[RMDB]
RNA sequence: GGGAACGACUCGAGUAGAGUCGAAAAUUGGACCAGCACAUGUCCCAGCCGUAUGAAGAAUUGGAACGGAAGCUCCAAAAGAGAGACGAGGAACAGCGUCAGCUCGCCAUUGACAGCGCCAACCUGCAACACACCGUGGUUUCGACCACGGUGUGUUAAAAGAAACAACAACAACAAC
Reactivity to DMS in 0.01 (KOAc 150mM, MgCl2 10mM, bicine 150mM(pH8.5), 24C), signal-to-noise 2, nucleotides 027 to 126: u030u000g040g000a180c060c020a060g000c010a060c020a110u000g000u000c020c020c020a080g050c070c020g010u060a130u000g030a230a090g000a100a140u010u040g020g000a010a020c090g000g010a050a160g020c030u000c040c080a020a040a090a090g000a080g000a110g000a050c000g040a090g010g000a170a140c170a090g000c070g000u000c000a030g000c030u000c030g000c030c010a030u000u020g020a030c030a150g000c000g000c000c000a030a210c000c000u020g050c160
Reactivity to 2A3 in 0.01 (KOAc 150mM, MgCl2 10mM, bicine 150mM(pH8.5), 24C), signal-to-noise 2, nucleotides 027 to 126: u160u150g040g030a000c000c000a030g030c010a040c010a090u100g020u000c040c030c000a000g010c010c010g140u160a060u260g050a030a050g030a100a110u150u150g000g070a060a000c020g040g010a020a020g000c000u050c000c020a090a060a080a000g070a020g000a030g000a000c090g000a020g020g110a070a070c060a020g050c000g070u050c010a020g020c000u030c000g030c010c010a020u020u170g060a040c050a060g000c010g000c010c000a030a060c000c000u020g000c050
Chemical mapping of a 177-nucleotide RNA with DMS and 2A3. DMS adducts were read by reverse transcription with MarathonRT. The data come from the RNA Mapping Database (RMDB), library OK1LIB. For 2A3, 1,104 sequencing reads were counted. Values cover nucleotides 27 to 126. For DMS, 1,486 sequencing reads were counted.